[RMDB]
RNA sequence: GGGAACGACUCGAGUAGAGUCGAAAAGAUAUGGACCGUUCAACCGAGUCAACAGCUAUGUCAAUUCUAAAUCGGAAACGAUUUAGAAUUGACAUAGACAUGACUAAGGUUGAGACGGUCCUAAGUCCAGAUGUAAAAAGUUCGCUUUUUACAUCUGAAAAGAAACAACAACAACAAC
Reactivity to DMS in 0.01 (KOAc 150mM, MgCl2 10mM, bicine 150mM(pH8.5), 24C), signal-to-noise 7, nucleotides 027 to 126: g000a100u000a300u000g010g000a010c000c000g010u000u000c000a010a000c000c010g020a060g010u000c010a030a110c300a190g010c010u010a000u000g010u000c000a010a010u000u000c000u010a000a000a000u010c000g010g000a130a080a200c010g010a010u000u000u000a000g010a010a000u000u000g010a000c000a000u000a000g000a040c080a190u000g000a010c000u000a070a140g010g000u000u000g010a080g010a010c010g010g000u000c000c000u000a010a090g000u010c060
Reactivity to 2A3 in 0.01 (KOAc 150mM, MgCl2 10mM, bicine 150mM(pH8.5), 24C), signal-to-noise 4, nucleotides 027 to 126: g050a000u130a060u280g000g000a000c000c000g000u020u010c010a000a000c000c000g050a010g010u020c000a040a100c060a200g070c010u010a010u010g010u020c000a000a000u010u000c000u000a010a010a010u000c000g020g050a140a080a060c000g000a000u000u010u010a000g000a000a000u000u000g000a000c000a010u000a000g000a010c000a030u030g010a000c010u040a250a300g020g000u010u010g010a010g020a000c000g000g000u020c000c000u000a030a000g020u000c030
Structure probing data (DMS and 2A3) for a 177-nucleotide construct. It was measured as part of the RMDB library TTRINS. For 2A3 the reverse transcriptase was SuperScript II with manganese. Reactivities are given for positions 27 through 126.